[RMDB]
RNA sequence: GGGAACGACUCGAGUAGAGUCGAAAAACAACCAAAGAAGCUAAAGGCGUCUUGAGGUCUCUCGCCGAUAAGGUUAGAGGUAGAAUGUUCGUUGAUCAUGCUGUUAUUCAUCUGAUGUAUAUUCCAGUGAUACUUGAUACAACACACGCGGUCGCUGUAUAACUCUGCCGUUCGCGGCAGAGUUAUAAAAAGAAACAACAACAACAAC
Reactivity to 2A3 in 0.01 (KOAc 150mM, MgCl2 10mM, bicine 150mM(pH8.5), 24C), signal-to-noise 1, nucleotides 027 to 156: a000c010a010a050c050c040a030a040a080g180a120a000g020c120u260a300a020a000g080g000c000g000u000c010u090u180g050a110g020g000u030c000u000c000u000c020g000c030c030g200a140u250a240a020g010g000u000u000a000g000a000g000g080u020a020g060a250a100u050g010u080u190c110g000u000u000g000a020u070c000a060u020g050c030u130g070u190u010a150u110u030c010a080u040c040u010g010a040u030g140u100a070u020a100u300u090c080c000a000g000u010g080a000u030a080c000u000u050g000a000u070a040c040a030a000c020a000c000a000c080g060c060g020g000u040c000g050c120u060g000